[RMDB]
Annotation: An RNA of 177 nucleotides, treated with DMS and 2A3 and read out base by base. DMS adducts were read by reverse transcription with MarathonRT. Reactivities are given for positions 27 through 126.
RNA sequence: GGGAACGACUCGAGUAGAGUCGAAAAUAGCUGAAAAAGAGUUUAUACUCUGAUCACACAGUAACAUUGCAAUAAAAGCUUAGCUCGAGAUGCGUGUGCCGUUCUGCUUUUAAUGCGAUCUGGUUCCGUAAGGAGUAAGGUUCGCCUUACUCCUUACAAAAGAAACAACAACAACAAC
Reactivity to DMS in 0.01 (KOAc 150mM, MgCl2 10mM, bicine 150mM(pH8.5), 24C), signal-to-noise 9, nucleotides 027 to 126: u020a120g020c100u000g010a030a040a090a080a010g000a020g010u000u020u040a140u040a100c000u000c000u000g000a270u010c070a090c120a170c070a040g010u010a070a080c180a060u000u000g010c030a030a070u020a020a030a040a030g010c010u010u010a130g020c030u000c040g000a090g010a080u020g010c030g010u010g000u010g000c040c030g000u010u000c030u000g010c010u000u000u010u010a030a070u010g010c010g010a030u000c070u010g010g010u000u000c030c050
Reactivity to 2A3 in 0.01 (KOAc 150mM, MgCl2 10mM, bicine 150mM(pH8.5), 24C), signal-to-noise 9, nucleotides 027 to 126: u090a010g040c060u020g060a020a030a000a030a000g030a010g010u110u200u120a210u090a040c000u000c000u010g020a040u070c000a020c000a010c010a060g040u070a110a040c040a140u040u100g030c020a040a040u050a110a070a020a010g020c020u070u110a020g010c010u030c060g110a120g030a120u160g070c050g030u170g090u110g050c010c010g030u050u020c030u050g010c000u020u040u020u080a070a060u080g000c010g010a010u000c030u070g080g010u050u020c020c020
Source information
Source: RMDB libraries RFM100 and RFMREP, as collected in RNAgym.